Conditions: 150 mM KOAc, 10 mM MgCl2 and 150 mM bicine (pH 8.5), 24 C. An RNA of 177 nucleotides, treated with 2A3 and DMS and read out base by base. For 2A3, 756 sequencing reads were counted. The data come from the RNA Mapping Database (RMDB), library OK1LIB. High DMS reactivity at an A or C suggests that its Watson-Crick edge is free.
RNA sequence: GGGAACGACUCGAGUAGAGUCGAAAAGAAGAGAGUAGAAGAUGGCCGCCAUGGUCCGAGCCCCUCGCUGGCGCCGGCUGGGCAACACCAUUGCACUCCGGUGGCGUAUGGUACAAGAGAGAAAGAACCCGACUCAUUUAUUCGUAAAUGAGUCGGGAAAAGAAACAACAACAACAAC
Reactivity to 2A3 in 0.01 (KOAc 150mM, MgCl2 10mM, bicine 150mM(pH8.5), 24C), signal-to-noise 1, nucleotides 027 to 126: g190a050a020g040a010g000a040g040u140a010g010a120a000g020a090u080g000g010c040c000g000c010c050a080u100g030g000u070c020c070g000a090g010c000c000c000c000u050c020g000c060u020g150g050c000g000c000c030g000g020c040u020g000g000g000c000a010a000c020a010c140c000a030u030u060g010c070a000c000u040c000c020g040g090u060g080g000c060g020u100a100u130g000g050u090a030c040a080a010g070a010g000a000g020a110a030a000g050a000a030
Reactivity to DMS in 0.01 (KOAc 150mM, MgCl2 10mM, bicine 150mM(pH8.5), 24C), signal-to-noise 2, nucleotides 027 to 126: g000a140a010g000a060g000a020g000u020a030g030a060a120g000a100u000g000g000c060c030g000c050c060a090u020g020g020u030c020c010g020a060g000c030c010c020c080u000c100g020c030u000g000g020c020g000c060c030g000g030c130u000g000g000g010c010a040a050c220a130c110c210a070u010u000g010c030a010c090u010c040c030g020g000u000g000g100c020g010u000a020u070g000g000u000a070c170a040a010g000a170g000a080g000a020a050a080g000a080a180